[RMDB]
RNA sequence: GGGAACGACUCGAGUAGAGUCGAAAAGCGUACUACCAGUGCUUGGAUUUAGUAAAUGGAGCCAAUAAAACUCCCAAAUAGGAGGAGUACGUUGGCGUUGAAAUUUACUUGUCAGCACUGGUAUCGCAAAACGUAUCAGCGUUCGCGCUGAUACGAACUUAUUGUUCGAGUUCGCUCGAACAAUAAGAAAAGAAACAACAACAACAAC
Reactivity to DMS in 0.01 (KOAc 150mM, MgCl2 10mM, bicine 150mM(pH8.5), 24C), signal-to-noise 2, nucleotides 027 to 156: g020c030g000u010a070c120u000a050c030c010a030g040u000g020c020u000u020g040g020a050u000u000u000a010g030u000a000a020a020u000g000g010a300g030c000c010a020a040u010a020a090a150a250c000u000c010c000c010a030a160a180u010a100g000g000a040g010g010a040g000u000a050c160g010u000u000g000g010c020g000u010u010g020a090a090a040u000u000u000a010c000u000u000g010u000c020a050g000c000a020c010u020g000g010u000a000u010c010g030c020a080a050a080a180c050g030u000a000u000c000a030g030c010g030u000u010c280g030c020g000c000u000g000a010u000a010c010g000a020a040
Reactivity to 2A3 in 0.01 (KOAc 150mM, MgCl2 10mM, bicine 150mM(pH8.5), 24C), signal-to-noise 5, nucleotides 027 to 156: g000c010g020u060a080c060u000a000c010c000a010g000u010g000c010u110u220g160g030a100u300u280u160a000g000u000a000a000a020u010g020g000a000g000c000c010a020a000u080a050a110a050a050c000u030c000c000c030a090a220a160u290a170g090g100a110g010g000a000g010u000a010c090g000u000u000g000g000c070g020u050u010g000a020a000a000u010u000u000a000c000u000u000g000u000c000a000g000c000a010c000u000g000g000u000a000u020c000g020c000a040a070a000a050c010g000u000a000u010c000a000g010c010g060u050u160c250g010c010g000c110u000g000a000u000a000c000g000a000a000